An RNA of 177 nucleotides, treated with 2A3 and DMS and read out base by base. For DMS, 3,064 sequencing reads were counted. The 2A3 profile rests on 1,852 reads. Values cover nucleotides 27 to 126. 2A3 adducts were read by reverse transcription with SuperScript II with manganese.

RNA sequence: GGGAACGACUCGAGUAGAGUCGAAAAGGAACCAACGUCUUAACAACCUUAUGCUGGGUAAUGCGACCAGACCCAACACCCGGUCGGGAAACUCCUUUGUUCCUGUUGGGACUACCCAGUUUACUGGGCACCCAAUGUUAUUCGUAACAUUGGGUGCAAAAGAAACAACAACAACAAC
Reactivity to 2A3 in 0.01 (KOAc 150mM, MgCl2 10mM, bicine 150mM(pH8.5), 24C), signal-to-noise 2, nucleotides 027 to 126: g020g010a030a010c050c020a050a100c080g090u010c040u100u120a100a070c060a020a060c020c000u070u010a050u130g010c020u020g000g000g020u030a110a070u160g070c030g030a040c000c020a030g080a110c000c010c000a000a000c020a040c030c030c000g180g220u180c180g010g020g080a080a050a060c070u150c020c010u140u060u130g000u040u030c000c000u000g040u010u030g000g000g000a000c030u000a000c010c000c000a020g000u000u000u020a070c030u040g020g000
Reactivity to DMS in 0.01 (KOAc 150mM, MgCl2 10mM, bicine 150mM(pH8.5), 24C), signal-to-noise 4, nucleotides 027 to 126: g000g010a070a180c120c110a080a090c140g000u010c090u000u000a090a140c130a100a230c020c040u000u000a050u010g010c020u000g000g000g010u000a030a050u000g010c120g020a070c060c050a060g030a260c010c010c010a030a030c060a180c070c040c020g000g000u010c140g000g020g000a100a100a100c180u000c020c030u000u000u000g000u000u000c000c000u000g010u000u010g000g010g020a170c100u000a040c010c000c000a020g000u000u010u010a040c120u000g010g000